[RMDB]
RNA sequence: GGGAACGACUCGAGUAGAGUCGAAAAUGUUGUUUAUUAAUAAGCCUGACCAGGGUCACACCCAAGGUAGUAACCGAGUUUUACUUCUCCUGGUCUUGGGGAGAGGCUCAAGGAUCAGGGACAAGCUAUACCCAGGUUGAUUCGUCAACCUGGGUAUAAAAGAAACAACAACAACAAC
Reactivity to 2A3 in 0.01 (KOAc 150mM, MgCl2 10mM, bicine 150mM(pH8.5), 24C), signal-to-noise 2, nucleotides 027 to 126: u020g000u000u000g000u000u040u050a210u060u130a070a040u080a300a060g150c000c000u000g000a000c020c020a090g000g000g070u000c000a050c000a010c020c000c050a000a000g040g060u050a110g100u010a100a000c040c060g000a030g000u080u080u050u120a110c010u050u030c030u030c040c140u100g040g040u070c000u000u000g050g000g020g010a270g040a020g010g000c000u000c060a110a300g010g050a150u010c000a010g030g000g010a010c030a230a000g000c000u000
This 177-nucleotide RNA was probed chemically with 2A3.
High 2A3 reactivity points to a flexible backbone, as in loops and unpaired stretches.
2A3 adducts were read by reverse transcription with SuperScript II with manganese.
For 2A3, 818 sequencing reads were counted.
Conditions: 150 mM KOAc, 10 mM MgCl2 and 150 mM bicine (pH 8.5), 24 C.